[RMDB]
RNA sequence: GGGAACGACUCGAGUAGAGUCGAAAAGAUAUGGAUUCUUGACAUGCCAUUCAUCGGAAACGAUGACUGGCAACAGCAAGAUCCUAAGUCAAACUCGUUAACCGCAGUUCGCUGCGGUUAACGAGAACAUGUUGUUCUUCUUCGGAAGAACAACAUGAAAAGAAACAACAACAACAAC
Reactivity to 2A3 in 0.01 (KOAc 150mM, MgCl2 10mM, bicine 150mM(pH8.5), 24C), signal-to-noise 2, nucleotides 027 to 126: g030a020u060a040u140g000g020a030u300u180c010u000u050g040a140c020a100u090g000c010c000a000u000u010c000a000u000c010g040g040a080a030a050c010g000a010u000g010a000c010u000g000g000c010a010a010c010a010g040c000a010a010g010a000u000c000c000u030a140a010g040u020c050a060a030a170c000u000c010g000u000u000a000a000c000c000g000c000a020g020u100u140c240g060c180u000g000c000g000g000u000u000a000a000c010g000a000g000a000a010
Reactivity to DMS in 0.01 (KOAc 150mM, MgCl2 10mM, bicine 150mM(pH8.5), 24C), signal-to-noise 4, nucleotides 027 to 126: g000a060u010a300u000g000g000a010u010u010c000u000u000g000a040c100a250u000g030c010c000a000u000u000c000a010u010c000g010g000a090a070a180c000g010a010u000g000a010c110u010g020g010c000a010a020c200a170g000c000a000a000g000a040u000c000c000u010a050a160g000u010c020a100a110a220c010u000c000g010u000u000a000a000c000c000g000c000a010g020u000u010c230g020c000u000g020c020g020g000u000u000a000a010c000g010a000g000a040a160